[RMDB]
This 177-nucleotide RNA was probed chemically with 2A3 and DMS. The data come from the RNA Mapping Database (RMDB), library OK2TRN. High 2A3 reactivity points to a flexible backbone, as in loops and unpaired stretches. For DMS, 1,600 sequencing reads were counted. DMS adducts were read by reverse transcription with MarathonRT.
RNA sequence: GGGAACGACUCGAGUAGAGUCGAAAAUGAUGCUGCUGACUGGCAGCCGCCCAGAUCAGGUCAUCACAGUGUCUGACUUCCUGAAGCAUGUCAAGAAGGCAAAAAAGGUCAAGGCGCAUCUGGACAGGAUCGCAGAACUAUUCGUAGUUCUGCGAUCAAAAGAAACAACAACAACAAC
Reactivity to 2A3 in 0.01 (KOAc 150mM, MgCl2 10mM, bicine 150mM(pH8.5), 24C), signal-to-noise 2, nucleotides 027 to 126: u120g040a050u050g000c030u050g070c010u020g120a160c030u060g050g000c000a020g030c030c010g040c030c020c000a020g020a100u090c040a020g000g140u050c010a020u070c020a060c010a030g020u000g000u020c010u020g020a030c020u050u020c020c000u020g020a040a010g010c080a170u050g020u030c010a040a080g040a060a020g050g000c060a060a100a010a000a060a120g040g010u020c040a060a040g050g010c040g000c010a030u030c030u070g030g000a020c000a060g130
Reactivity to DMS in 0.01 (KOAc 150mM, MgCl2 10mM, bicine 150mM(pH8.5), 24C), signal-to-noise 3, nucleotides 027 to 126: u010g020a080u000g020c000u000g020c020u000g000a130c080u030g020g010c030a140g030c020c070g000c050c020c010a050g000a070u000c060a070g010g000u000c060a080u000c090a190c100a090g010u000g010u010c060u000g000a120c160u000u010c030c020u000g020a110a050g000c100a090u010g040u020c050a050a140g010a100a140g020g000c280a000a020a100a070a030a120g020g010u000c040a060a070g010g020c110g000c060a050u000c070u000g000g000a050c090a100g020